[RMDB]
RNA sequence: GGGAACGACUCGAGUAGAGUCGAAAAGAAAGGCAGCUAGUGCAGCCCACGCAGCGGCAUGCUUUUGCAUGCCCAGUCGAGCCCACGACUAAGGGCAGCUGCGCCACUGAGGGCAGCUGCCGAAAGACAUAGGGUCAUCGUUCGCGAUGACCCUAUGAAAAGAAACAACAACAACAAC
Reactivity to 2A3 in 0.01 (KOAc 150mM, MgCl2 10mM, bicine 150mM(pH8.5), 24C), signal-to-noise 1, nucleotides 027 to 126: g100a010a060a000g000g000c000a000g000c100u140a010g110u080g250c060a000g020c030c030c020a090c020g050c000a040g000c000g080g000c010a020u020g000c030u200u260u260u300g000c000a000u020g000c010c020c000a030g010u000c000g040a020g020c000c000c000a020c010g080a000c010u030a060a130g120g000g000c000a010g000c020u010g000c000g080c000c050a260c170u230g090a240g030g040g040c000a000g000c000u000g000c000c030g000a000a020a000g080a000
Reactivity to DMS in 0.01 (KOAc 150mM, MgCl2 10mM, bicine 150mM(pH8.5), 24C), signal-to-noise 2, nucleotides 027 to 126: g020a120a120a130g040g010c000a020g000c100u000a140g000u000g020c040a050g010c070c040c120a200c170g000c050a090g010c170g040g000c010a010u000g000c020u000u000u000u000g030c000a030u020g000c010c000c030a030g020u000c000g030a090g000c030c040c020a300c030g000a040c050u030a120a130g020g010g030c020a080g000c010u000g000c010g030c020c060a240c220u000g000a090g000g000g010c000a050g000c000u010g010c000c020g020a030a080a130g010a230